[RMDB]
RNA sequence: GGGAACGACUCGAGUAGAGUCGAAAAGCAGGAGUGUUCGCACUCCUGCAAAUGAAAGCGGCCAGCUCCAGGCCGCCAAACAAUAUGGAGCACAAAGUAUAGAAAGGCCUACGUUCGCGUAGGCCAACAACCUUUAAGAGUUCGCUCUUAAAGGUUGAAAAGAAACAACAACAACAAC
Reactivity to DMS in 0.01 (KOAc 150mM, MgCl2 10mM, bicine 150mM(pH8.5), 24C), signal-to-noise 4, nucleotides 027 to 126: g020c000a010g010g000a020g040u000g000u000u010c190g030c000a020c000u000c000c000u000g020c000a010a050a050u010g010a080a140a210g000c000g000g020c010c000a090g010c000u000c000c010a010g000g000c010c000g000c000c080a010a050a030c100a020a020u000a070u000g000g000a030g010c010a180c240a060a070a080g030u010a140u000a110g000a070a190a100g020g020c000c000u000a010c000g020u000u020c230g030c000g020u000a000g010g000c000c020a000a040

The data come from the RNA Mapping Database (RMDB), library M2PK50. The record gives the reactivity of an RNA of 177 nucleotides to DMS. The RNA was probed in 150 mM KOAc, 10 mM MgCl2 and 150 mM bicine (pH 8.5) at 24 C.